[RMDB]
Background
The record gives the reactivity of an RNA of 177 nucleotides to 2A3 and DMS.
RNA sequence: GGGAACGACUCGAGUAGAGUCGAAAAUGCAGGGGCGAUAUCGCGUAGUCCUUUAGCACGUAGCGGUGCCCACAACAACCGCGACCAUAAACCAAGCCCACACAUAUAGAGCAUAAAACCGACAAUGGAGUUUUAAAAAGUUCGCUUUUUAAAACUCAAAAGAAACAACAACAACAAC
Reactivity to 2A3 in 0.01 (KOAc 150mM, MgCl2 10mM, bicine 150mM(pH8.5), 24C), signal-to-noise 2, nucleotides 027 to 126: u050g000c000a000g010g020g010g000c010g040a040u020a040u160c060g000c050g000u050a050g050u010c000c000u020u040u090a050g020c030a030c100g060u080a020g010c030g020g000u040g020c020c010c040a160c040a020a000c010a000a020c000c000g020c020g010a020c030c020a070u140a110a020a020c040c020a060a000g000c010c010c000a010c020a000c020a060u100a010u050a170g030a030g050c020a010u090a100a000a050a070c070c050g090a020c040a000a040u260g110
Reactivity to DMS in 0.01 (KOAc 150mM, MgCl2 10mM, bicine 150mM(pH8.5), 24C), signal-to-noise 3, nucleotides 027 to 126: u010g010c010a060g000g000g000g010c020g030a120u020a070u000c030g000c050g020u010a300g010u000c000c020u020u010u020a090g010c000a030c120g010u000a220g010c070g000g010u010g000c030c040c070a100c150a040a080c080a040a050c070c020g010c000g010a080c080c060a040u000a050a110a110c080c080a070a110g000c020c000c000a090c090a030c090a070u000a120u010a050g000a080g030c030a060u020a050a090a100a150c040c050g000a030c180a060a080u010g000
It was measured as part of the RMDB library OK2TST. The reactions ran in a buffer of 150 mM KOAc, 10 mM MgCl2 and 150 mM bicine (pH 8.5), at 24 C. 2A3 adducts were read by reverse transcription with SuperScript II with manganese.